[RMDB]
RNA sequence: GGGAACGACUCGAGUAGAGUCGAAAACGGAUUAGGCGUGGAGGCGAAAGUCACCCUCCUCGCAUCGCAAAUUCGUGCUUGCGACUUACACGUAGGGCGAGGGGUGGGCGAAAGUUGCCAUGAGACCAAAAUAUGUAGUUCUUCGGAACUACAUAAAAUGGUAUAAGAGAUUCGUCUCUUAUACCAUAAAAGAAACAACAACAACAAC
Reactivity to 2A3 in 0.01 (KOAc 150mM, MgCl2 10mM, bicine 150mM(pH8.5), 24C), signal-to-noise 7, nucleotides 027 to 156: c020g030g030a080u110u120a090g020g030c020g010u020g020g010a010g020g040c080g080a180a070a040g090u100c050a080c020c010c000u020c000c010u010c000g000c000a020u070c020g030c040a030a050a030u130u090c040g020u070g080c110u040u070g040c030g050a060c050u080u130a030c100a020c110g080u100a090g030g050g030c070g020a060g010g010g020g030u160g020g000g000c030g020a070a040a010g030u040u060g010c030c010a030u070g050a030g030a070c030c030a040a000a030a070u050a000u020g000u000a000g000u010u000c010u020u020c130g010g000a000a000c000u000a000c000a000u000a000a000a000
Reactivity to DMS in 0.01 (KOAc 150mM, MgCl2 10mM, bicine 150mM(pH8.5), 24C), signal-to-noise 4, nucleotides 027 to 156: c060g020g000a120u000u000a070g020g020c030g030u000g010g010a050g030g040c050g010a060a100a160g030u000c030a070c050c000c000u000c000c000u000c020g010c050a060u000c050g030c050a040a060a210u010u000c050g040u000g000c080u000u010g030c110g000a110c090u000u010a070c050a070c040g020u000a160g010g010g020c020g000a020g000g000g000g000u010g020g000g000c030g000a040a060a150g000u000u000g010c000c020a070u000g000a090g010a180c020c020a050a070a090a210u000a030u000g010u000a010g000u000u000c000u000u000c300g060g000a010a000c000u000a000c010a000u000a010a050a100